[RMDB]
RNA sequence: GGGAACGACUCGAGUAGAGUCGAAAAUCAUAGCUUCACCAGCGCGACCUGGUCCUCCACGAGCUGGCCCGCGGGCGCGAGCUCAGCUUUUACCUUCCCGCCCACCUCCUCGCGCAGGUACACCGAAAUCGGUAUUUGUGUUCGCACAAAUACCGAUAAAAGAAACAACAACAACAAC
Reactivity to DMS in 0.01 (KOAc 150mM, MgCl2 10mM, bicine 150mM(pH8.5), 24C), signal-to-noise 1, nucleotides 027 to 126: u020c080a090u010a100g010c050u010u000c120a020c040c050a070g010c050g020c080g000a050c020c110u000g040g020u000c050c010u040c020c090a090c130g000a030g010c030u000g040g020c010c020c050g030c070g000g010g030c130g040c050g000a050g000c030u000c020a010g010c010u000u010u000u000a170c060c060u010u000c010c010c000g020c050c010c010a110c050c000u000c010c020u000c040g040c040g020c040a010g000g010u000a090c150a140c010c010g000a050a120

Structure probing data (DMS) for a 177-nucleotide construct. The reactions ran in a buffer of 150 mM KOAc, 10 mM MgCl2 and 150 mM bicine (pH 8.5), at 24 C. For DMS, 832 sequencing reads were counted. Values cover nucleotides 27 to 126.